Structure probing data (2A3 and DMS) for a 177-nucleotide construct.
RNA sequence: GGGAACGACUCGAGUAGAGUCGAAAACUUUGGUGAGCCCCUAUCUAGUAUAGCAAUCCACCAAGCAGGUGAAUUCACACAAUUCAGGUUCUCAGAGAAAAUGCGCCCUGACUUGACAGGUAUGGUCCGGCAUAAAUAUCUUCGGAUAUUUAUGCCGAAAAGAAACAACAACAACAAC
Reactivity to 2A3 in 0.01 (KOAc 150mM, MgCl2 10mM, bicine 150mM(pH8.5), 24C), signal-to-noise 5, nucleotides 027 to 126: c020u040u070u120g040g000u050g030a030g010c030c000c000c000u020a020u030c040u050a030g120u080a030u040a080g030c030a010a030u020c020c000a020c000c000a050a040g060c050a070g010g080u030g060a040a050u130u080c020a010c010a000c020a120a090u070u030c030a010g070g000u070u010c050u010c020a030g050a010g080a100a080a040a050u100g030c000g050c000c020c000u020g030a090c000u080u050g010a030c010a060g050g090u140a100u110g090g010u020c020
Reactivity to DMS in 0.01 (KOAc 150mM, MgCl2 10mM, bicine 150mM(pH8.5), 24C), signal-to-noise 3, nucleotides 027 to 126: c070u010u000u010g000g040u000g000a140g000c060c300c300c030u000a010u010c030u020a100g010u030a030u000a000g010c050a090a090u040c070c010a000c020c010a040a040g040c120a070g040g030u000g020a020a020u040u000c060a130c150a100c070a060a040u030u010c010a070g010g030u000u020c030u000c010a070g000a150g010a060a030a120a010u020g000c130g010c180c020c010u000g000a050c070u010u000g000a120c030a010g000g000u010a040u010g000g020u000c060
For DMS, 4,331 sequencing reads were counted. The data come from the RNA Mapping Database (RMDB), library OK1LIB. DMS adducts were read by reverse transcription with MarathonRT.